This 177-nucleotide RNA was probed chemically with DMS and 2A3.
RNA sequence: GGGAACGACUCGAGUAGAGUCGAAAAAAUCGUUGACCAAAUUGAACGUCGUACUUAUGGUAAUGCGGAAACAUUUUACCCUAUGCCAUUCUUAUCACCACAAACAAUGUGGUACUACAAAUCAGCACCUAGGAUAUCUCUUCGGAGAUAUCCUAGGAAAAGAAACAACAACAACAAC
Reactivity to DMS in 0.01 (KOAc 150mM, MgCl2 10mM, bicine 150mM(pH8.5), 24C), signal-to-noise 3, nucleotides 027 to 126: a050a070u010c080g010u010u000g000a150c020c010a040a130a120u030u050g000a100a200c150g020u000c070g020u000a090c080u020u010a020u000g000g000u010a000a080u000g000c150g000g000a300a070a170c200a070u010u000u020u010a170c000c000c040u000a150u000g000c020c000a120u030u000c050u010u010a070u000c090a050c000c040a050c030a090a120a120c300a000a070u030g010u050g000g000u000a030c130u000a030c210a080a070a050u030c100a090g000c170a220
Reactivity to 2A3 in 0.01 (KOAc 150mM, MgCl2 10mM, bicine 150mM(pH8.5), 24C), signal-to-noise 7, nucleotides 027 to 126: a000a000u190c060g010u000u070g090a090c020c030a070a040a110u080u180g010a120a030c040g040u020c040g020u070a070c060u130u090a040u140g040g000u100a150a060u090g030c130g100g050a090a040a050c070a100u090u090u070u170a200c020c000c000u030a060u130g010c000c030a020u050u040c030u080u150a130u200c060a010c020c000a020c040a060a240a030c060a120a300u130g000u000g020g020u010a040c010u030a000c010a020a070a080u100c030a040g060c040a050
Values cover nucleotides 27 to 126.